[RMDB]
RNA sequence: GGGAACGACUCGAGUAGAGUCGAAAAAGCAAGACACUGCGUUCAGGCUCUCGAUACGCCGGGAUAACCUGGCGUCAGACCUGCCGGAACUUAGCAGGGAAUCGUUACGGAUCUGCUGUAUAGCCGGGGGUAGGAUGACUUUCGAGUCAUCCUACCCAAAAGAAACAACAACAACAAC
Reactivity to DMS in 0.01 (KOAc 150mM, MgCl2 10mM, bicine 150mM(pH8.5), 24C), signal-to-noise 1, nucleotides 027 to 126: a060g000c110a050a060g000a170c300a130c030u000g010c000g000u000u000c060a050g000g000c070u000c150u000c000g000a050u020a000c000g000c010c010g000g000g010a300u020a140a230c000c000u000g000g050c000g010u020c100a090g000a020c000c110u000g000c000c020g000g060a000a110c150u000u000a100g000c000a000g000g000g070a090a010u000c000g000u000u020a140c300g010g000a070u000c040u000g000c000u000g000u030a110u000a040g000c000c000g040g090
Reactivity to 2A3 in 0.01 (KOAc 150mM, MgCl2 10mM, bicine 150mM(pH8.5), 24C), signal-to-noise 2, nucleotides 027 to 126: a000g100c090a080a020g130a080c110a020c150u100g000c000g030u040u080c080a040g030g030c050u000c000u000c040g020a010u060a150c020g000c000c000g000g000g000a160u180a200a160c010c010u070g000g000c000g030u010c000a000g000a020c000c000u030g000c020c000g000g000a050a040c050u150u090a060g000c000a000g030g010g100a090a040u060c040g120u290u120a030c000g010g000a000u000c000u050g000c010u040g020u040a040u070a060g000c000c000g030g000